[RMDB]
RNA sequence: GGGAACGACUCGAGUAGAGUCGAAAAAAGAACAAAAAGAUUAGCCAGUUGUGGUGGUGCAUGUUGUAGUCUCAGCUAUUUGAGAGGCUGAGAUGGGAGAAUUACCUGAGCCCAGGAAGUCGAGGCUGCAGUGAGCCAUGAUUACACCACUGCACUAAUUUACUACGGUAUUCGUACCGUAGUAAAUAAAAGAAACAACAACAACAAC
Reactivity to 2A3 in 0.01 (KOAc 150mM, MgCl2 10mM, bicine 150mM(pH8.5), 24C), signal-to-noise 3, nucleotides 027 to 156: a000a000g150a090a050c110a040a140a020a030a010g140a150u180u140a030g060c050c040a040g050u050u060g010u070g010g000u010g000g020u000g010c030a040u040g000u060u040g050u060a010g000u000c000u010c000a010g000c020u040a200u140u120u100g210a250g020a090g110g000c020u050g040a050g010a060u040g000g030g000a110g040a120a120u120u080a090c010c000u010g020a020g030c000c000c040a020g040g030a040a000g040u100c050g010a020g020g000c000u050g030c010a010g020u050g110a010g070c040c000a020u040g010a100u070u140a010c010a010c020c000a000c000u000g000c010a010c020u050a010
Reactivity to DMS in 0.01 (KOAc 150mM, MgCl2 10mM, bicine 150mM(pH8.5), 24C), signal-to-noise 3, nucleotides 027 to 156: a070a030g020a110a140c040a040a050a050a130a120g000a140u010u010a090g010c030c020a120g020u000u010g050u010g000g030u010g000g030u010g000c030a070u010g000u000u000g000u000a120g010u000c000u000c010a000g020c020u000a140u000u000u000g010a270g000a170g020g020c020u000g010a020g010a030u000g000g000g000a150g020a130a060u000u000a070c010c010u010g010a090g030c010c010c010a100g020g020a060a050g000u000c030g000a080g010g000c020u010g010c030a080g020u010g000a090g050c070c050a080u000g000a110u000u000a080c040a020c020c010a030c000u000g020c020a070c090u010a070